Annotation: This 207-nucleotide RNA was probed chemically with DMS and 2A3. The DMS profile rests on 12,867 reads. The 2A3 profile rests on 8,776 reads. DMS adducts were read by reverse transcription with MarathonRT. It was measured as part of the RMDB library M2RFPK.
[RMDB]
RNA sequence: GGGAACGACUCGAGUAGAGUCGAAAAAUACACCAGCAGUAGGACUCAGCGACCGUCACAACAAGGUUGUGCUGGUAUCCGUCGGUCGUAUAGCCCUGUCUUGCAGGUUGCCUUGCACUGACGUGCCACACCAUUUACAGAUUCGUCUGUAAAUGAAUGACAUAAUCGUAUUCGUACGAUUAUGUCAAAAAGAAACAACAACAACAAC
Reactivity to DMS in 0.01 (KOAc 150mM, MgCl2 10mM, bicine 150mM(pH8.5), 24C), signal-to-noise 4, nucleotides 027 to 156: a120u000a080c050a200c000c000a080g040c030a070g020u010a060g010g010a080c010u000c090a180g010c000g000a020c010c020g020u000c060a150c070a070a120c080a060a150g010g030u000u000g010u010g020c000u000g030g020u010a040u000c080c030g040u010c020g010g010u000c040g000u010a170u000a060g010c000c000c000u010g010u010c060u010u000g020c030a100g030g010u000u000g000c020c110u000u010g010c020a060c050u010g010a090c150g020u000g000c030c070a100c060a130c080c000a010u000u000u000a010c000a010g020a050u000u010c300g020u000c000u000g000u000a020a010a010u010g000a060a110
Reactivity to 2A3 in 0.01 (KOAc 150mM, MgCl2 10mM, bicine 150mM(pH8.5), 24C), signal-to-noise 6, nucleotides 027 to 156: a000u150a020c080a020c010c010a010g000c020a020g020u150a040g000g060a030c040u040c110a020g030c010g040a020c010c010g070u090c050a050c040a170a100c050a220a090g110g000u020u020g010u040g040c070u060g030g050u030a060u050c030c030g000u010c000g010g000u010c050g000u050a060u120a140g000c000c010c000u020g040u070c100u080u250g010c010a020g020g000u150u180g020c010c010u020u070g000c010a020c020u090g040a040c060g030u040g010c000c020a090c010a010c020c000a000u000u000u000a000c000a000g010a020u020u120c130g100u000c090u000g010u000a000a000a000u010g030a020a080